[RMDB]
RNA sequence: GGGAACGACUCGAGUAGAGUCGAAAAGAUAUGGAGACGACGAUCUAUGGGUCCCGACCGGUCGGAAACGACCGAAGUCGAAACCAUAGGGAGUCUCCUAAGUCAAAAGCUCCCGUUCGCGGGAGCACAUAGACAGUGCGUUCGCGCACUGUCUAUGAAAAGAAACAACAACAACAAC
Reactivity to DMS in 0.01 (KOAc 150mM, MgCl2 10mM, bicine 150mM(pH8.5), 24C), signal-to-noise 1, nucleotides 027 to 126: g000a040u000a300u040g010g000a020g000a010c000g000a100c300g010a070u000c000u010a000u000g010g020g010u000c280c130c000g000a000c000c000g010g000u000c000g000g000a020a070a280c000g040a000c000c000g000a030a060g000u000c000g010a080a090a300c000c020a000u000a000g000g000g000a020g010u000c010u000c000c000u010a000a000g020u000c060a100a020a200a200g000c000u010c000c000c000g010u010u010c150g010c010g040g000g020a040g010c000a000
Source: RMDB library TTRDES, as collected in RNAgym. Chemical mapping of a 177-nucleotide RNA with DMS.